Annotation:
An RNA of 177 nucleotides, treated with DMS and 2A3 and read out base by base. The DMS profile rests on 1,498 reads. The RNA was probed in 150 mM KOAc, 10 mM MgCl2 and 150 mM bicine (pH 8.5) at 24 C. High DMS reactivity at an A or C suggests that its Watson-Crick edge is free.
RNA sequence: GGGAACGACUCGAGUAGAGUCGAAAAAGGGCUGGAUUCGUCCAGCCCUGCACAUUCGUACGCAACGAAGCGUACGUCAUUACGCAAAUGAGGUAAAGCGUAGAACCACGGACUUCGGUCCGUGGAAUGGAAUGAGCGAAUUCGUUCGCUCAUUCCAAAAAGAAACAACAACAACAAC
Reactivity to DMS in 0.01 (KOAc 150mM, MgCl2 10mM, bicine 150mM(pH8.5), 24C), signal-to-noise 2, nucleotides 027 to 126: a030g000g000g010c000u000g000g000a060u000u030c190g000u000c000c020a010g020c000c010c000u000g060c150a060c270a180u000u010c000g020u020a000c020g020c000a120a120c300g030a100a100g000c000g030u000a000c000g000u020c140a090u010u000a000c010g010c000a050a090a100u000g020a110g010g050u000a090a050a170g020c000g020u000a070g010a110a140c010c000a000c020g000g020a030c000u000u000c160g040g010u000c000c000g050u000g000g000a000a010
Reactivity to 2A3 in 0.01 (KOAc 150mM, MgCl2 10mM, bicine 150mM(pH8.5), 24C), signal-to-noise 1, nucleotides 027 to 126: a020g020g020g010c010u010g000g010a020u030u010c130g050u050c050c000a000g000c000c010c000u010g000c000a030c000a060u020u070c000g010u000a000c060g020c070a150a050c190g150a170a020g000c000g000u000a010c010g000u030c020a060u030u170a010c000g000c010a050a040a270u200g040a180g000g140u180a050a040a000g000c000g010u000a020g060a080a040c030c000a000c020g000g000a000c000u050u060c210g020g030u000c010c000g000u000g000g000a000a010